[RMDB]
RNA sequence: GGGAACGACUCGAGUAGAGUCGAAAAGCAUCGUUCGCGAUGCCCUCCGCGUACUACUCGGGAGUUCGAGGAUCUAGGUUUCCCUGUUCCCAAAUAGGAACAGAACAACCUAGGGAGAACGAAGAACGAGUAUCGCAGUUUAUGGGUUCGCCCAUAAGCGUUAUGUAGGAUUCGUCCUACAUAACGCAAAAGAAACAACAACAACAAC
Reactivity to 2A3 in 0.01 (KOAc 150mM, MgCl2 10mM, bicine 150mM(pH8.5), 24C), signal-to-noise 8, nucleotides 027 to 156: g010c000a010u010c010g090u140u240c300g030c030g110a010u010g010c000c000c010u040c020c040g000c010g020u070a120c020u000a000c000u020c000g010g010g030a080g020u000u000c020g010a210g010g000a010u000c000u000a000g010g020u000u020u030c030c040c000u000g010u000u010c010c010c040a160a230a050u300a080g000g000a000a000c000a000g010a050a020c040a030a010c000c000u000a000g000g000g000a020g000a020a000c050g100a300a040g020a060a010c010g000a010g000u020a050u300c010g000c010a000g010u050u060u040a020u020g010g000g060u060u110c230g090c020c000c000a030u060a060a030
Reactivity to DMS in 0.01 (KOAc 150mM, MgCl2 10mM, bicine 150mM(pH8.5), 24C), signal-to-noise 3, nucleotides 027 to 156: g020c010a000u000c000g040u000u000c300g040c000g010a010u010g010c010c020c060u000c030c030g000c080g050u000a110c110u010a010c000u020c010g000g020g000a300g040u000u000c010g000a130g020g000a150u000c020u010a030g030g010u010u000u000c110c060c020u000g010u000u000c000c000c020a030a160a210u010a030g000g010a040a060c010a010g020a060a070c100a020a020c000c000u010a030g010g000g000a100g020a060a050c020g010a110a180g000a150a140c010g000a090g010u000a040u000c010g010c060a030g010u000u000u010a070u000g010g010g020u000u000c160g000c000c000c010a000u000a000a150
Annotation:
The record gives the reactivity of an RNA of 207 nucleotides to 2A3 and DMS. It was measured as part of the RMDB library RNAMAK. Values cover nucleotides 27 to 156. The reactions ran in a buffer of 150 mM KOAc, 10 mM MgCl2 and 150 mM bicine (pH 8.5), at 24 C.